[RMDB]
RNA sequence: GGGAACGACUCGAGUAGAGUCGAAAACGGCCUCUCCUCGCUAUUGCGCGUUGCCGUUCACAGAGCUGCCUCCAGGGCUUGUUUUGGUAAUGCCUUUCUCCCAUUUAUGGGCUACCCUAGUGGCCUGCACGUAGUGAUUUUUCGAAAUCACUACGUGAAAAGAAACAACAACAACAAC
Reactivity to DMS in 0.01 (KOAc 150mM, MgCl2 10mM, bicine 150mM(pH8.5), 24C), signal-to-noise 9, nucleotides 027 to 126: c060g000g000c030c040u000c040u000c030c020u000c040g010c050u010a090u010u020g020c040g010c070g010u000u010g010c020c020g000u000u000c090a090c110a090g010a100g010c030u000g010c030c010u000c050c070a080g010g000g010c060u010u010g010u000u010u010u010g010g020u010a080a110u030g010c020c020u000u010u000c080u000c010c000c020a120u020u030u020a100u020g000g000g010c010u000a030c020c160c110u010a160g010u000g000g000c000c010u000g010
Reactivity to 2A3 in 0.01 (KOAc 150mM, MgCl2 10mM, bicine 150mM(pH8.5), 24C), signal-to-noise 9, nucleotides 027 to 126: c020g020g000c010c010u020c010u010c010c000u030c010g020c040u090a090u140u250g040c070g000c020g040u020u050g040c010c010g040u090u070c080a080c020a040g060a020g030c030u030g030c020c000u040c030c030a060g000g040g010c000u050u080g070u050u110u050u070g050g010u070a070a050u110g010c010c000u020u060u010c060u030c000c000c010a030u060u120u100a150u180g010g000g000c010u030a040c040c010c020u030a060g020u010g040g010c000c010u040g020
Chemical mapping of a 177-nucleotide RNA with DMS and 2A3. Conditions: 150 mM KOAc, 10 mM MgCl2 and 150 mM bicine (pH 8.5), 24 C. For 2A3 the reverse transcriptase was SuperScript II with manganese. Source: RMDB libraries RFM100 and RFMREP, as collected in RNAgym.